[RMDB]
RNA sequence: GGGAACGACUCGAGUAGAGUCGAAAACGUUGAUCACAUUCAACGCUUGCUGCAGCGGGGAGGCAUUUGCGGCCUCGGCGCUACCAUAUGCGCCCGCAGCCGUGCUCAAGGCCUGGAUAAACCGUUCUCAUACAGUCAAGUUCGCUUGACUGUAUGAAAAAGAAACAACAACAACAAC
Reactivity to DMS in 0.01 (KOAc 150mM, MgCl2 10mM, bicine 150mM(pH8.5), 24C), signal-to-noise 9, nucleotides 027 to 126: c020g010u000u000g000a020u010c300a160c240a130u010u010c010a020a020c010g010c050u000u000g010c080u000g000c120a060g010c040g010g000g010g000a050g010g010c020a090u010u000u010g020c070g010g010c010c030u000c230g000g010c010g020c000u000a210c160c210a110u000a080u000g000c010g010c030c010c070g020c140a110g010c010c030g020u000g010c130u000c120a070a080g000g010c010c010u000g000g010a110u010a070a070a110c060c040g010u000u000c100
Reactivity to 2A3 in 0.01 (KOAc 150mM, MgCl2 10mM, bicine 150mM(pH8.5), 24C), signal-to-noise 7, nucleotides 027 to 126: c010g010u010u010g010a040u110c140a050c070a300u160u070c010a030a010c030g000c050u030u100g050c040u050g030c020a050g040c010g020g030g010g020a020g020g000c030a050u050u090u250g040c040g020g010c010c010u020c020g020g000c000g000c000u050a110c050c110a120u110a060u300g000c000g010c010c040c000g040c020a000g000c000c010g050u060g030c030u040c120a050a050g050g000c010c000u060g070g040a120u120a070a100a030c020c020g020u100u000c020